Background: Conditions: 150 mM KOAc, 10 mM MgCl2 and 150 mM bicine (pH 8.5), 24 C. The record gives the reactivity of an RNA of 177 nucleotides to 2A3 and DMS. High 2A3 reactivity points to a flexible backbone, as in loops and unpaired stretches. For DMS the reverse transcriptase was MarathonRT. It was measured as part of the RMDB library OK2TST.

RNA sequence: GGGAACGACUCGAGUAGAGUCGAAAACUUGGCACAGUUGACGUGAAUGGUGUGGCCUAUGACAAAUUUUGGGACAAGCGCACAGGCAACUGUGUGUACGUCCUUCAGGAAGGGCUACGCAGCCCAACCGGGUUAGAGAAUUCGUUCUCUAACCCGGAAAAGAAACAACAACAACAAC
Reactivity to 2A3 in 0.01 (KOAc 150mM, MgCl2 10mM, bicine 150mM(pH8.5), 24C), signal-to-noise 1, nucleotides 027 to 126: c000u060u080g090g010c020a040c050a100g030u130u130g210a030c050g150u130g120a150a110u190g100g020u060g030u000g020g090c000c000u060a190u150g040a030c130a040a110a070u270u180u160u300g000g030g000a020c030a070a070g040c030g000c000a000c010a000g010g070c000a000a010c030u010g010u000g000u010g010u000a000c020g000u000c000c010u040u040c010a000g090g000a070a230g030g000g030c010u010a050c120g000c080a030g040c000c000c000a000a040
Reactivity to DMS in 0.01 (KOAc 150mM, MgCl2 10mM, bicine 150mM(pH8.5), 24C), signal-to-noise 3, nucleotides 027 to 126: c110u000u030g000g030c080a080c050a150g010u020u010g000a070c100g020u000g010a070a070u000g000g020u010g020u000g010g020c070c030u010a060u010g000a170c160a100a110a210u010u000u000u010g000g000g020a010c000a110a300g000c010g000c010a000c010a030g010g000c300a110a170c000u000g000u000g010u010g030u000a020c300g000u000c000c000u000u000c130a050g000g020a080a180g000g010g010c010u000a040c140g000c120a140g010c000c000c010a070a140